[RMDB]
RNA sequence: GGGAACGACUCGAGUAGAGUCGAAAAGAUAUGGACGAAUUAACAAACCAUACUUUCUUCAACAGCUAACUGCUUCGGAAACGAAGUUUAGACAUGAAGGGUAUGGUUUGUUAAUUCGUCCUAAGUCGCUAAGUAGGUUGUUCGCAACCUACUUAGCAAAAGAAACAACAACAACAAC
Reactivity to DMS in 0.01 (KOAc 150mM, MgCl2 10mM, bicine 150mM(pH8.5), 24C), signal-to-noise 2, nucleotides 027 to 126: g000a060u010a300u000g000g000a050c000g000a020a010u000u000a000a000c000a000a020a010c000c000a020u010a000c000u000u020u010c000u000u000c000a020a130c300a300g000c010u000a010a000c300u000g010c040u000u000c000g000g010a170a080a300c000g000a000a000g020u000u000u000a020g020a060c100a250u000g000a010a030g030g000g010u010a000u010g000g000u000u000u010g010u010u000a000a000u000u000c010g000u000c000c010u000a000a110g030u020c040

Overview:
Source: RMDB library TTRINS, as collected in RNAgym. Structure probing data (DMS) for a 177-nucleotide construct. DMS adducts were read by reverse transcription with MarathonRT. For DMS, 1,355 sequencing reads were counted.